[RMDB]
RNA sequence: GGGAACGACUCGAGUAGAGUCGAAAAAGCCAUACCAUUACGAUGGUAUGGCAAGUCCGUGACGGCGAUGGAUCCCGCCUGGCCGAUGCCGAUCUGCCGAUCUGGCUGAUGGUUCCUGCCCCGUCAAAAAACGUAAAGCACUUCGGUGCUUUACGAACUGAUAAUUUACCUUCGGGUAAAUUAUCAGAAAAGAAACAACAACAACAAC
Reactivity to 2A3 in 0.01 (KOAc 150mM, MgCl2 10mM, bicine 150mM(pH8.5), 24C), signal-to-noise 6, nucleotides 027 to 156: a000g000c000c000a000u000a000c000c010a010u040u060a080c270g090a020u010g000g000u010a000u000g000g000c000a000a010g020u000c010c020g030u030g010a010c000g000g020c120g040a030u060g010g000a010u030c010c000c000g010c010c020u020g010g000c010c030g020a010u090g230c070c070g140a100u010c020u050g020c010c020g100a170u100c100u120g020g000c040u060g050a170u180g010g000u020u010c010c000u050g020c000c010c010c000g000u000c000a070a030a030a020a010a010c010g000u000a000a000a000g000c000a000c010u020u100c220g080g000u000g000c000u000u000u000a000c000g000a020a000
Reactivity to DMS in 0.01 (KOAc 150mM, MgCl2 10mM, bicine 150mM(pH8.5), 24C), signal-to-noise 3, nucleotides 027 to 156: a130g000c000c000a010u000a010c010c000a040u010u000a110c280g060a180u000g000g000u000a000u010g010g010c000a010a010g020u000c040c040g000u000g010a030c000g000g000c040g020a180u000g000g000a060u010c010c010c040g000c020c020u010g010g000c000c000g010a110u000g000c040c030g010a140u000c050u000g020c100c050g010a060u010c030u010g030g000c030u000g020a140u010g000g000u000u010c020c000u000g020c070c060c030c020g010u000c010a000a050a100a080a130a130c020g010u000a010a010a010g010c000a010c000u000u010c290g040g020u000g010c000u000u000u000a000c010g010a030a070
Structure probing data (2A3 and DMS) for a 207-nucleotide construct. High 2A3 reactivity points to a flexible backbone, as in loops and unpaired stretches. The DMS profile rests on 8,711 reads. Source: RMDB library M2RFPK, as collected in RNAgym. 2A3 adducts were read by reverse transcription with SuperScript II with manganese. The RNA was probed in 150 mM KOAc, 10 mM MgCl2 and 150 mM bicine (pH 8.5) at 24 C.